Chemical mapping of a 177-nucleotide RNA with DMS and 2A3. Values cover nucleotides 27 to 126. Conditions: 150 mM KOAc, 10 mM MgCl2 and 150 mM bicine (pH 8.5), 24 C. The DMS profile rests on 1,747 reads. DMS adducts were read by reverse transcription with MarathonRT.
RNA sequence: GGGAACGACUCGAGUAGAGUCGAAAAGCGAAGGUGGGCGAGUCGGGAGACGAGGAGUUCGAGAUCAUACCGCUGGUUGAGGGAAUAUCGUAUGUUGCGAUACGUCUCCAGGAUCAGUUCCAUCGCCCCAUGGUACGCGUUUCGACGCGUACCAUGGAAAAGAAACAACAACAACAAC
Reactivity to DMS in 0.01 (KOAc 150mM, MgCl2 10mM, bicine 150mM(pH8.5), 24C), signal-to-noise 2, nucleotides 027 to 126: g030c090g000a150a090g050g020u020g020g020g010c010g000a110g030u000c010g010g000g010a050g000a010c010g000a120g010g030a210g000u020u000c030g050a220g010a070u000c030a060u020a120c060c100g030c210u000g000g010u000u010g010a200g010g000g010a050a090u000a030u000c010g000u000a090u010g010u000u000g030c000g010a060u000a060c070g000u020c000u020c010c000a050g010g000a060u000c060a150g000u010u000c010c030a060u010c030g000c030c040
Reactivity to 2A3 in 0.01 (KOAc 150mM, MgCl2 10mM, bicine 150mM(pH8.5), 24C), signal-to-noise 2, nucleotides 027 to 126: g090c070g120a230a000g050g050u060g020g000g010c010g010a030g070u040c070g000g000g000a020g000a010c020g020a070g160g060a080g060u110u060c060g000a010g000a050u030c030a030u090a210c030c050g120c160u060g000g050u000u050g010a040g050g040g010a040a060u050a020u050c010g000u060a090u270g300u150u200g050c000g010a010u010a020c010g010u000c010u000c020c010a010g050g000a050u070c050a010g000u110u140c010c000a000u010c010g020c000c020